Chemical mapping of a 207-nucleotide RNA with 2A3 and DMS. DMS adducts were read by reverse transcription with MarathonRT. The RNA was probed in 150 mM KOAc, 10 mM MgCl2 and 150 mM bicine (pH 8.5) at 24 C. Source: RMDB library RNAMAK, as collected in RNAgym. 2A3 adducts were read by reverse transcription with SuperScript II with manganese.
RNA sequence: GGGAACGACUCGAGUAGAGUCGAAAAGGGGUCCAUCCGAGGCAAUUGACAUGGCUUAUACUGAAGCCUCCACGGUAUACUGGCCAACAGCAAUUGCUACCCACCGGAUGGACGGAGGCACCCAAAAUACGAGACACGAUUCGUCGUGUCUCGUAAAGUAAAGACCAAGUUUCGACUUGGUCUUUACAAAAGAAACAACAACAACAAC
Reactivity to 2A3 in 0.01 (KOAc 150mM, MgCl2 10mM, bicine 150mM(pH8.5), 24C), signal-to-noise 4, nucleotides 027 to 156: g070g000g030g010u010c000c000a000u010c010c000g000a020g010g000c000a010a000u030u020g100a220c220a300u190g020g000c010u030u010a000u000a000c010u010g050a130a020g010c000c000u000c000c000a010c020g010g000u010a000u010a060c220u160g060g010c020c020a100a060c100a170g080c000a000a000u000u000g010c000u020a040c100c070c020a030c010c010g000g010a000u010g000g000a000c010g000g000a000g000g000c000a030c000c000c000a040a100a040a010u120a000c000g000a000g000a000c000a000c020g040a010u070u120c270g060u010c000g000u160g000u000c000u000c000g000u010a000a000a000
Reactivity to DMS in 0.01 (KOAc 150mM, MgCl2 10mM, bicine 150mM(pH8.5), 24C), signal-to-noise 1, nucleotides 027 to 156: g090g070g000g040u010c000c000a030u030c050c000g000a150g010g000c010a000a040u000u000g000a040c030a220u010g010g010c000u000u000a040u000a030c000u000g010a040a120g000c020c020u010c010c020a300c000g000g000u000a030u000a000c120u050g040g060c000c000a110a180c140a100g000c000a020a020u000u010g040c000u010a070c000c000c020a300c000c030g010g010a020u000g010g010a000c010g010g000a010g010g080c030a130c020c010c050a000a130a060a120u000a020c000g000a000g010a010c000a050c000g000a110u010u010c300g020u000c000g020u000g030u000c000u010c010g030u000a010a070a120